About this RNA:
Structure probing data (DMS and 2A3) for a 177-nucleotide construct. For 2A3, 4,928 sequencing reads were counted. DMS (dimethyl sulfate) methylates the pairing face of unpaired adenines and cytosines. Values cover nucleotides 27 to 126. For 2A3 the reverse transcriptase was SuperScript II with manganese.
RNA sequence: GGGAACGACUCGAGUAGAGUCGAAAAGCUCCGGUCUUCGGACCGGAGCAAAGAAGCUCAUAAUGACGCAAACAACGGCGUCAGCCUGAGCAAACGCGGAAAAAACUACCUUGUUCGCAAGGUAGAACACUAUUUACACGUUCGCGUGUAAAUAGUGAAAAGAAACAACAACAACAAC
Reactivity to DMS in 0.01 (KOAc 150mM, MgCl2 10mM, bicine 150mM(pH8.5), 24C), signal-to-noise 4, nucleotides 027 to 126: g010c000u000c000c010g010g010u000c010u010u020c190g020g000a010c010c010g010g000a000g020c020a000a020a070g010a140a110g000c000u000c010a010u010a110a190u000g000a010c010g000c000a030a090a180c280a080a120c260g010g010c010g010u000c000a000g000c300c200u000g000a010g020c000a030a050a070c110g010c160g010g000a000a050a050a080a140a140c000u000a000c000c000u000u000g010u000u010c210g030c010a010a000g000g000u000a010g000a050a100
Reactivity to 2A3 in 0.01 (KOAc 150mM, MgCl2 10mM, bicine 150mM(pH8.5), 24C), signal-to-noise 3, nucleotides 027 to 126: g010c000u000c010c000g020g000u010c000u060u100c240g080g000a010c010c000g010g000a000g010c000a000a000a010g010a010a020g000c000u010c000a020u050a110a050u020g000a000c010g030c000a030a180a180c070a130a200c150g100g010c000g000u000c000a000g000c000c000u010g000a000g000c010a020a090a020c130g000c070g080g040a080a080a010a000a030a030c010u010a000c000c000u000u000g030u040u060c230g000c090a000a010g000g000u010a000g000a020a000
The reactions ran in a buffer of 150 mM KOAc, 10 mM MgCl2 and 150 mM bicine (pH 8.5), at 24 C.